[RMDB]
RNA sequence: GGGAACGACUCGAGUAGAGUCGAAAAGAUAUGGAUCCGAAGGCUCUUGGAUUUACGGCGUAUUCGGAAACGAAUACCGAGUUGUCAGAGCUUAGGAUCCUAAGUCAAAGUACGCUUCGGCGUACAAGACAAUCCACAACUUCGGUUGUGGAUUGUCAAAAGAAACAACAACAACAAC
Reactivity to 2A3 in 0.01 (KOAc 150mM, MgCl2 10mM, bicine 150mM(pH8.5), 24C), signal-to-noise 1, nucleotides 027 to 126: g020a020u070a030u190g020g010a000u000c010c020g020a050a000g020g020c020u030c050u270u250g210g000a110u300u270u270a070c080g040g030c130g050u000a000u000u000c000g010g000a070a010a000c000g000a000a010u010a000c000c020g070a060g120u020u010g020u020c010a000g000a000g000c060u050u000a010g000g000a010u000c000c010u000a040a000g000u030c030a000a140a000g000u000a000c000g010c020u030u080c290g150g000c010g000u000a000c000a010a000
Reactivity to DMS in 0.01 (KOAc 150mM, MgCl2 10mM, bicine 150mM(pH8.5), 24C), signal-to-noise 2, nucleotides 027 to 126: g000a090u010a300u000g000g000a030u000c000c000g000a190a240g000g000c000u000c020u020u000g010g020a010u000u000u000a030c010g000g000c300g030u000a000u000u010c020g010g000a070a110a220c000g010a000a030u000a020c030c010g020a300g020u000u000g030u000c020a030g010a040g040c000u000u000a300g000g000a030u010c020c000u000a020a030g010u000c040a120a090a150g000u000a000c010g010c000u000u030c170g010g010c010g020u010a000c000a070a130
The data come from the RNA Mapping Database (RMDB), library TTRDEL.
An RNA of 177 nucleotides, treated with 2A3 and DMS and read out base by base.
High 2A3 reactivity points to a flexible backbone, as in loops and unpaired stretches.
The DMS profile rests on 857 reads.
The RNA was probed in 150 mM KOAc, 10 mM MgCl2 and 150 mM bicine (pH 8.5) at 24 C.